Structure probing data (2A3) for a 207-nucleotide construct.
The data come from the RNA Mapping Database (RMDB), library RNAMAK.
The RNA was probed in 150 mM KOAc, 10 mM MgCl2 and 150 mM bicine (pH 8.5) at 24 C.
Reactivities are given for positions 27 through 156.
The 2A3 profile rests on 1,331 reads.

RNA sequence: GGGAACGACUCGAGUAGAGUCGAAAAGGGGUCUCCCUCCGAAUGUCCGUCACAGCUUUUGACGCUCUGAAGCCUCCACGGAGCGAUAAGCUGUACGGACAUCUAGACAGAGGGAGACGGAGGCACCCAAACGCUUUGCCGUUCGCGGCAAAGCGAAGGUGAGUUUAUACUUCGGUAUAAACUCACCAAAAGAAACAACAACAACAAC
Reactivity to 2A3 in 0.01 (KOAc 150mM, MgCl2 10mM, bicine 150mM(pH8.5), 24C), signal-to-noise 1, nucleotides 027 to 156: g010g000g000g000u020c000u000c020c020c000u000c010c010g080a130a060u020g000u000c000c000g040u050c160a000c010a030g000c030u120u130u180u110g130a070c010g010c020u050c000u020g040a090a020g010c000c010u010c010c000a010c020g010g000a000g000c000g030a050u070a170a010g000c000u000g010u000a000c000g060g000a000c000a010u000c000u020a040g020a050c040a000g020a000g000g000g000a000g000a000c010g020g000a000g000g010c020a050c010c010c000a030a080a020c010g010c000u000u000u000g000c020c000g030u020u050c300g030c000g080g000c000a010a000a000g000c010g000a070a010